[RMDB]
RNA sequence: GGGAACGACUCGAGUAGAGUCGAAAAUGAAAGCGCGAACUCAGCCGAAAGGCACCGCGAAGAAAAACAGGAUGACGCGCAUCCCACAUCCAGCGGACUCAGGCAGAGACGCGGAAGAGAAAAAAAACCAUACCUUCAGGUUCGCCUGAAGGUAUGGAAAAGAAACAACAACAACAAC
Reactivity to DMS in 0.01 (KOAc 150mM, MgCl2 10mM, bicine 150mM(pH8.5), 24C), signal-to-noise 1, nucleotides 027 to 126: u050g000a070a140a260g000c000g020c000g000a090a180c050u000c010a070g060c010c010g000a170a080a080g000g000c160a170c010c040g000c030g000a100a070g010a030a110a050a130a050c150a140g000g000a000u030g000a300c090g030c000g000c010a070u000c000c000c000a130c070a010u000c000c000a230g000c000g060g030a090c030u030c010a300g020g010c110a010g000a010g010a150c040g000c000g010g010a040a080g000a180g040a020a000a000a070a100a050a100a060
Reactivity to 2A3 in 0.01 (KOAc 150mM, MgCl2 10mM, bicine 150mM(pH8.5), 24C), signal-to-noise 1, nucleotides 027 to 126: u110g040a110a080a000g100c020g030c000g050a100a050c030u000c020a020g010c000c010g060a110a040a030g060g040c060a080c090c040g040c030g010a070a130g070a030a120a000a000a000c050a010g000g000a050u020g020a000c030g000c030g000c120a010u020c000c030c000a020c000a050u010c010c000a000g000c030g050g000a070c000u020c040a010g010g000c020a010g010a000g000a050c000g000c080g080g070a150a130g070a060g100a140a040a000a000a000a000a000a020